An RNA of 177 nucleotides, treated with DMS and 2A3 and read out base by base.
2A3 adducts were read by reverse transcription with SuperScript II with manganese.
RNA sequence: GGGAACGACUCGAGUAGAGUCGAAAACUUUUUUUCCAGACCAAGGGCUGUGAACCCGCCUGGGGAUGAGGCCUGGUCUUGUGGAACUGAACUUAGCUCGACGGGGCUGACCGCUCUGGCCCAGGGUGAAUUUUCAUAUGUUCGCAUAUGAAAAUUCAAAAGAAACAACAACAACAAC
Reactivity to DMS in 0.01 (KOAc 150mM, MgCl2 10mM, bicine 150mM(pH8.5), 24C), signal-to-noise 5, nucleotides 027 to 126: c030u000u010u000u010u020u000u010c010c010a050g000a060c060c080a080a130g010g010g010c010u000g010u020g020a130a160c040c010c030g010c160c100u020g000g000g020g000a070u020g020a160g000g010c030c000u000g000g010u000c000u010u020g010u010g000g010a030a040c160u000g020a080a070c150u020u010a090g010c020u000c010g010a100c090g000g000g000g000c030u010g000a070c130c040g000c030u010c030u010g000g000c010c010c020a070g000g000g020u010
Reactivity to 2A3 in 0.01 (KOAc 150mM, MgCl2 10mM, bicine 150mM(pH8.5), 24C), signal-to-noise 9, nucleotides 027 to 126: c010u150u060u020u020u000u060u030c020c020a020g010a010c010c020a110a150g080g030g000c030u050g060u110g220a080a090c010c000c020g120c070c130u170g010g000g010g020a030u110g080a020g030g000c000c030u030g010g000u000c000u010u080g060u080g040g030a030a020c030u040g010a040a030c020u070u080a050g020c010u020c020g070a050c050g030g000g020g010c010u030g020a030c020c020g020c010u000c010u030g050g010c020c000c010a030g030g020g010u060